Structure probing data (DMS and 2A3) for a 177-nucleotide construct. Conditions: 150 mM KOAc, 10 mM MgCl2 and 150 mM bicine (pH 8.5), 24 C. DMS (dimethyl sulfate) methylates the pairing face of unpaired adenines and cytosines. For DMS, 5,887 sequencing reads were counted. For 2A3, 3,304 sequencing reads were counted.
RNA sequence: GGGAACGACUCGAGUAGAGUCGAAAAGUAGAAGAAAGAUCUAUAUAACAGAAGAUAUGUUAUUUUGUUUUCUAAAAACAAUUAUCGUGAUUGUCUAAUCUCUUCUUAUUGUUUAUUUUAGUAGAAAGUUGAGUUGUGUUUUCGAGCACAAUUCAACAAAAGAAACAACAACAACAAC
Reactivity to DMS in 0.01 (KOAc 150mM, MgCl2 10mM, bicine 150mM(pH8.5), 24C), signal-to-noise 3, nucleotides 027 to 126: g020u010a010g000a020a050g010a100a100a150g010a060u000c020u010a020u010a040u040a070a070c060a090g000a150a120g010a140u040a090u050g010u000u000a050u010u010u010u000g000u010u020u010u010c050u000a010a050a050a030a020c000a010a020u000u010a040u030c090g020u030g010a010u000u000g000u040c110u070a060a030u000c020u000c010u000u000c030u000u000a040u010u010g000u010u000u000a050u020u040u010u020a060g000u000a050g000a060a030a090
Reactivity to 2A3 in 0.01 (KOAc 150mM, MgCl2 10mM, bicine 150mM(pH8.5), 24C), signal-to-noise 3, nucleotides 027 to 126: g070u070a010g000a110a010g040a060a150a000g040a020u030c020u040a040u010a040u020a140a040c020a010g090a070a010g000a060u080a020u060g040u030u010a050u010u050u040u010g010u000u040u010u030c050u060a030a000a000a020a000c000a000a010u040u030a100u130c030g010u020g050a050u010u040g100u060c060u070a020a030u010c030u000c000u090u000c010u030u030a030u050u000g000u010u040u020a120u020u120u000u010a050g010u000a000g040a050a090a000